Source: RMDB library OK2TRN, as collected in RNAgym. This 177-nucleotide RNA was probed chemically with 2A3 and DMS. High 2A3 reactivity points to a flexible backbone, as in loops and unpaired stretches. The 2A3 profile rests on 884 reads. The DMS profile rests on 2,004 reads. The reactions ran in a buffer of 150 mM KOAc, 10 mM MgCl2 and 150 mM bicine (pH 8.5), at 24 C.
[RMDB]
RNA sequence: GGGAACGACUCGAGUAGAGUCGAAAAGGAUCCUCUCACAGGAUUGUCUCUGUUUUCCGAAACUCCAACAGUAUUGCUUCGGGAAACCUACAGCAAUACUGUAGGUAUAGAGAGUAGGAGAGGAUCGUAUAGUGCAGGAGUUCGCUCCUGCACUAUAAAAAGAAACAACAACAACAAC
Reactivity to 2A3 in 0.01 (KOAc 150mM, MgCl2 10mM, bicine 150mM(pH8.5), 24C), signal-to-noise 1, nucleotides 027 to 126: g110g000a010u040c020c020u000c020u050c000a180c090a090g160g000a070u190u240g130u070c010u020c010u050g030u020u130u070u090c040c030g050a030a060a030c040u030c000c000a010a040c000a010g000u020a010u020u020g020c020u010u060c020g000g020g020a040a040a010c010c010u020a020c080a020g000c000a000a040u020a060c000u010g000u010a000g060g020u020a020u100a030g130a000g020a020g020u120a080g030g010a000g020a020g050g000a000u010c010g020
Reactivity to DMS in 0.01 (KOAc 150mM, MgCl2 10mM, bicine 150mM(pH8.5), 24C), signal-to-noise 3, nucleotides 027 to 126: g010g000a010u000c000c010u000c000u000c010a170c090a130g010g000a170u000u010g000u000c030u010c000u010g000u000u000u020u000c090c060g030a100a090a070c090u000c030c030a110a040c040a020g000u000a040u000u010g010c030u000u010c300g000g000g000a100a050a110c000c000u010a130c300a030g000c000a030a010u000a130c000u000g000u000a000g010g020u000a060u020a060g020a080g010a030g020u000a100g030g000a020g000a020g000g020a000u000c000g030